[RMDB]
RNA sequence: GGGAACGACUCGAGUAGAGUCGAAAAUACGGCAUAACUCGAUAAGCGUGAUCGGGAGCACGCCACAGACCACACCCCGCAAGGACACCCGCUUGAGCCUGGGAAAGGUGGACUUCGAGAGGGCGGGACUGCACGACCUCUUCGGAGGUCGUGCAGUAAAAGAAACAACAACAACAAC
Reactivity to DMS in 0.01 (KOAc 150mM, MgCl2 10mM, bicine 150mM(pH8.5), 24C), signal-to-noise 1, nucleotides 027 to 126: u000a130c040g000g000c040a030u030a060a000c010u010c000g000a030u000a030a020g000c070g000u070g040a040u010c080g000g010g000a060g030c090a110c030g000c000c000a220c070a110g010a050c110c060a070c000a090c050c000c050c030g030c120a130a030g000g000a020c130a060c000c010c010g000c090u000u000g000a150g040c010c090u050g000g000g000a060a090a010g000g060u000g000g000a110c070u010u050c030g050a050g030a150g050g000g070c010g000g000g000
Reactivity to 2A3 in 0.01 (KOAc 150mM, MgCl2 10mM, bicine 150mM(pH8.5), 24C), signal-to-noise 2, nucleotides 027 to 126: u220a000c020g000g000c060a000u020a300a140c000u000c010g020a010u020a170a050g030c060g010u050g090a080u070c060g040g050g020a090g060c020a000c170g000c030c020a080c070a000g050a000c020c010a010c040a050c070c000c020c000g060c020a060a030g020g030a000c000a010c070c000c020g020c000u030u000g040a010g100c000c020u040g030g020g000a120a080a020g060g060u080g000g060a080c080u040u000c100g070a130g040a110g010g010g020c000g010g010g000